[RMDB]
RNA sequence: GGGAACGACUCGAGUAGAGUCGAAAAGCUGUUUUCAGACUGGAGUACAAUGGGAUGACUAGCUCACUGCAGCCUCAAACUGCUGGGUUCAAGUGAUUCUCCUUCCUCAGCCUCCUGAGUAGCUGGGACUACAGGUGGUCACCAUCACACCUGGCUAAUGCGUCCGCUUAUUCGUAAGCGGACGCAUAAAAGAAACAACAACAACAAC
Reactivity to 2A3 in 0.01 (KOAc 150mM, MgCl2 10mM, bicine 150mM(pH8.5), 24C), signal-to-noise 1, nucleotides 027 to 156: g020c030u020g060u000u030u100u130c040a070g020a110c050u060g040g020a000g080u070a040c140a130a300u180g020g000g110a030u040g080a120c050u050a000g000c000u040c010a070c100u110g010c010a010g020c000c000u150c130a150a130a120c030u060g030c000u000g050g000g050u000u090c080a090a000g000u090g080a000u170u000c040u050c010c000u040u030c000c000u060c000a000g000c010c040u100c040c000u030g060a020g030u040a010g000c020u070g000g030g000a010c050u100a050c160a020g000g000u010g010g020u050c010a010c020c060a120u160c060a000c000a000c000c070u040g020g070c020u100a060